[RMDB]
RNA sequence: GGGAACGACUCGAGUAGAGUCGAAAAGAUAUGGAGCCAGGGUAAUAGCGAGGAUCAUGCAUCGGAAACGAUGCAUGGGAGCUGAUACCUGGCUCCUAAGUCAAACUAUGUGGUUCGCCACAUAGAAGACACCUAUGAUCUUCGGAUCAUAGGUGUCAAAAGAAACAACAACAACAAC
Reactivity to 2A3 in 0.01 (KOAc 150mM, MgCl2 10mM, bicine 150mM(pH8.5), 24C), signal-to-noise 2, nucleotides 027 to 126: g010a010u020a000u030g000g000a000g040c020c000a000g050g100g030u170a300a250u160a300g000c030g100a300g000g020a000u020c000a010u020g000c000a010u010c000g020g040a000a000a010c000g000a000u000g000c000a000u000g000g000g000a000g000c010u040g080a010u040a100c010c000u000g010g000c000u010c000c000u000a000a010g000u010c010a000a000a020c010u000a010u010g020u020g000g100u070u080c300g120c070c020a000c000a000u000a000g000a020a030
Reactivity to DMS in 0.01 (KOAc 150mM, MgCl2 10mM, bicine 150mM(pH8.5), 24C), signal-to-noise 1, nucleotides 027 to 126: g000a010u000a050u020g010g000a010g030c000c020a000g010g000g030u000a180a160u010a050g060c010g010a070g000g000a080u020c000a030u000g000c000a010u000c000g000g000a020a010a050c010g070a000u000g010c010a010u010g000g000g000a030g020c030u000g000a090u010a120c020c000u000g000g020c000u000c000c000u000a000a040g000u000c020a180a090a300c020u000a020u000g010u000g010g000u000u000c300g010c000c000a010c000a000u000a010g000a150a140
An RNA of 177 nucleotides, treated with 2A3 and DMS and read out base by base. The reactions ran in a buffer of 150 mM KOAc, 10 mM MgCl2 and 150 mM bicine (pH 8.5), at 24 C. 2A3 adducts were read by reverse transcription with SuperScript II with manganese. For DMS the reverse transcriptase was MarathonRT. The data come from the RNA Mapping Database (RMDB), library TTRDES. The DMS profile rests on 1,701 reads.